RNA sequence: GGGAACGACUCGAGUAGAGUCGAAAAGCGCUUGGCACAACAAUGGUAUGCGUGGUUUGCGGCCCUAAUUUAUUCAGCACGCGACUGCCGCAUCCCGCACGGGAGGCGCAGCUGCUGCAUGACGCUUGCGCUGGAGGGUAUUCGUACCCUCCAGCGCAAAAGAAACAACAACAACAAC
Reactivity to 2A3 in 0.01 (KOAc 150mM, MgCl2 10mM, bicine 150mM(pH8.5), 24C), signal-to-noise 1, nucleotides 027 to 126: g000c000g000c050u090u100g080g020c010a000c080a210a000c000a000a110u300g090g000u290a070u130g100c020g050u000g000g050u000u000u100g000c000g000g040c000c000c000u000a130a130u000u180u300a300u170u050c030a000g010c000a010c070g000c030g000a000c000u000g080c010c070g000c000a000u000c000c000c000g090c000a050c010g000g110g070a000g000g000c000g030c120a000g000c110u030g000c000u020g030c010a080u000g040a100c070g020c100u010u070